An RNA of 177 nucleotides, treated with DMS and 2A3 and read out base by base. Source: RMDB library VIROID, as collected in RNAgym. For DMS the reverse transcriptase was MarathonRT. For 2A3, 1,650 sequencing reads were counted.
RNA sequence: GGGAACGACUCGAGUAGAGUCGAAAACUCUCAGCCCCUCCACCUUGGAGUGCCCUAUUCGGAGCACUGCAGUUCCCGAUAGAAAGGCUAAGCACCUCGCAAUGACGUAAGGUGGGACUUUUCCCUAGUUUCUAUAUAGCUUCGGCUAUAUAGAAACAAAAGAAACAACAACAACAAC
Reactivity to DMS in 0.01 (KOAc 150mM, MgCl2 10mM, bicine 150mM(pH8.5), 24C), signal-to-noise 4, nucleotides 027 to 126: c120u000c030u000c030a140g000c030c010c010c020u000c020c020a070c130c090u010u000g010g010a030g020u000g010c010c030c010u000a170u010u010c190g010g000a080g020c030a030c060u000g000c050a090g030u000u000c020c010c010g000a120u020a070g000a060a050a070g010g010c050u010a090a120g020c090a040c040c010u010c050g010c070a110a110u000g000a080c160g000u010a050a040g020g010u000g010g000g010a060c070u000u000u000u000c000c010c020u010a150
Reactivity to 2A3 in 0.01 (KOAc 150mM, MgCl2 10mM, bicine 150mM(pH8.5), 24C), signal-to-noise 2, nucleotides 027 to 126: c020u020c010u050c100a110g100c000c020c000c000u020c010c010a040c020c030u030u010g020g010a030g020u040g010c000c000c040u100a130u150u170c070g050g020a050g030c000a020c080u120g040c000a020g000u040u030c000c010c000g000a000u020a040g060a050a050a000g020g020c010u050a060a020g120c000a010c000c050u040c010g050c060a050a300u230g070a120c030g030u020a000a050g040g000u040g000g000g030a020c030u030u050u030u030c040c000c000u010a010
The reactions ran in a buffer of 150 mM KOAc, 10 mM MgCl2 and 150 mM bicine (pH 8.5), at 24 C. Values cover nucleotides 27 to 126.